The record gives the reactivity of an RNA of 177 nucleotides to 2A3.
RNA sequence: GGGAACGACUCGAGUAGAGUCGAAAAAAUAUAGCGAUGUAGGUUAGGUAACACUAAUCUCAUGACAUUUCUCCUUUCAACCGAAACUGUUUUAAACAGAUUCGUUGUUCAACGCAAUGACAACCCCCGGCUUGAUUGGGUUCGCCCAAUCAAGCCGAAAAGAAACAACAACAACAAC
Reactivity to 2A3 in 0.01 (KOAc 150mM, MgCl2 10mM, bicine 150mM(pH8.5), 24C), signal-to-noise 2, nucleotides 027 to 126: a000a000u300a010u090a020g040c040g050a010u030g030u190a000g000g000u010u000a000g000g020u000a000a050c060a000c090u050a010a010u030c000u000c000a020u020g010a040c030a010u110u170u000c140u010c000c000u000u090u120c020a000a070c010c040g000a070a020a000c000u000g160u000u050u060u170a070a170a010c050a010g000a050u070u040c040g000u000u030g060u050u130c100a060a000c090g000c100a070a140u010g020a020c000a000a140c020c000c000c000
The reactions ran in a buffer of 150 mM KOAc, 10 mM MgCl2 and 150 mM bicine (pH 8.5), at 24 C. For 2A3 the reverse transcriptase was SuperScript II with manganese. For 2A3, 687 sequencing reads were counted.